[RMDB]
RNA sequence: GGGAACGACUCGAGUAGAGUCGAAAAGCUAAGAGCAGCGCCAGUAUCCACCAAGAAAUUCAAGCCAGAGUUUCUGUCUCUAACAUAAAACAAGCGACUGUUUUGGCGCCCCUCCUCAGUCGUCGCGCACCCACCCAGUGUUCGCACUGGGUGGGUGAAAAGAAACAACAACAACAAC
Reactivity to DMS in 0.01 (KOAc 150mM, MgCl2 10mM, bicine 150mM(pH8.5), 24C), signal-to-noise 1, nucleotides 027 to 126: g000c080u140a030a050g030a060g000c000a030g000c050g040c020c000a100g030u010a040u000c030c060a130c080c180a050a000g000a000a000a070u000u000c130a150a120g000c100c130a140g000a110g030u000u000u030c000u000g000u000c000u000c070u000a080a070c030a180u010a090a010a130a070c150a140a150g000c060g000a090c030u130g000u030u000u080u030g000g010c060g000c000c000c000c000u000c000c090u050c010a040g000u000c030g030u000c000g030c110g010
Reactivity to 2A3 in 0.01 (KOAc 150mM, MgCl2 10mM, bicine 150mM(pH8.5), 24C), signal-to-noise 2, nucleotides 027 to 126: g000c000u070a060a000g020a040g100c040a010g000c020g030c000c000a040g000u070a120u000c050c030a030c040c000a140a000g050a030a090a020u130u100c060a070a070g130c060c030a010g010a000g000u030u010u080c020u050g010u010c030u030c020u050a110a120c030a070u300a050a100a020a000c080a150a000g020c050g090a090c000u010g070u090u100u030u040g050g000c040g040c000c000c000c000u060c000c010u080c030a010g030u030c000g000u020c020g000c000g030

An RNA of 177 nucleotides, treated with DMS and 2A3 and read out base by base. For DMS the reverse transcriptase was MarathonRT.